[RMDB]
This 207-nucleotide RNA was probed chemically with 2A3 and DMS.
DMS adducts were read by reverse transcription with MarathonRT.
The reactions ran in a buffer of 150 mM KOAc, 10 mM MgCl2 and 150 mM bicine (pH 8.5), at 24 C.
Reactivities are given for positions 27 through 156.
RNA sequence: GGGAACGACUCGAGUAGAGUCGAAAAGUUAACUGAUGCCAUUUGAAUUGCUUCCUCAAUUGACGCACCCGUAAAGGCCAUCACAUUGCGGAAGGCAUCAUCAAAUUCAAGCACAGAUCCAGCCAAAGUACCGUCUUCAAGGCGAGCUUGCUUGUCCUAUCGCACAUACAUUCGUGUAUGUGCGAUAAAAAGAAACAACAACAACAAC
Reactivity to 2A3 in 0.01 (KOAc 150mM, MgCl2 10mM, bicine 150mM(pH8.5), 24C), signal-to-noise 4, nucleotides 027 to 156: g050u080u080a060a120c030u020g020a110u010g040c000c030a070u040u070u090g050a060a080u060u080g030c000u020u020c000c000u000c000a010a010u010u020g030a060c040g020c080a100c010c040c020g060u130a170a100a090g020g020c060c000a030u040c010a030c040a030u020u010g020c040g000g030a040a040g140g040c000a000u030c030a040u000c010a020a040a020u130u060c040a040a010g000c020a020c020a040g050a040u000c070c050a010g040c060c040a070a070a010g020u070a190c070c060g050u070c010u040u200c120a130a020g010g000c010g000a010g010c030u030u030g010c000u020u030g010u040c000c000
Reactivity to DMS in 0.01 (KOAc 150mM, MgCl2 10mM, bicine 150mM(pH8.5), 24C), signal-to-noise 3, nucleotides 027 to 156: g020u010u000a110a110c050u000g000a120u000g000c020c070a190u020u020u000g020a030a300u010u000g010c020u000u000c020c010u000c010a040a030u020u000g040a020c040g030c110a020c010c000c020g010u000a050a130a080g030g050c100c030a040u000c000a030c180a050u010u010g030c170g000g000a060a050g040g050c000a020u010c050a230u020c040a020a040a030u000u010c070a040a050g020c000a090c050a080g020a100u010c020c070a080g020c010c050a050a070a080g000u000a090c020c020g030u000c010u010u000c070a060a110g010g040c010g000a090g020c060u000u000g000c040u000u000g010u010c080c070